[RMDB]
RNA sequence: GGGAACGACUCGAGUAGAGUCGAAAAGAUAUGGAAUGCCUUAGACAUGAAGUAUGUCUCGGAAACGAGAUUUACUUCAACAGCUAAUGCAUUCCUAAGUCAAAACCUUGGUGUUCGCACCAAGGAACUUUUCCUUGAACUUCGGUUCAAGGAAAAGAAAAGAAACAACAACAACAAC
Reactivity to 2A3 in 0.01 (KOAc 150mM, MgCl2 10mM, bicine 150mM(pH8.5), 24C), signal-to-noise 1, nucleotides 027 to 126: g020a010u050a040u080g000g010a000a000u000g000c000c010u000u000a000g040a090c130a300u300g000a030a010g000u020a000u030g000u000c000u020c000g000g050a030a000a020c030g000a000g010a010u000u010u000a000c000u000u010c000a000a020c060a010g000c000u000a020a010u000g000c000a000u020u000c000c000u010a020a010g020u000c010a010a070a120a250c000c000u000u010g060g010u010g040u080u100c300g000c180a020c030c000a000a000g030g020a010a000
Reactivity to DMS in 0.01 (KOAc 150mM, MgCl2 10mM, bicine 150mM(pH8.5), 24C), signal-to-noise 2, nucleotides 027 to 126: g000a010u010a230u030g000g000a000a000u000g010c020c200u000u020a000g010a010c090a300u000g000a000a010g000u000a020u020g000u000c000u000c010g030g030a130a040a120c000g000a030g010a010u000u000u000a010c000u010u000c000a070a000c300a210g010c010u010a000a020u000g020c010a000u010u010c010c000u000a000a060g000u000c010a110a080a110a070c000c000u000u010g000g010u000g020u000u020c300g040c000a010c000c000a020a000g020g000a020a060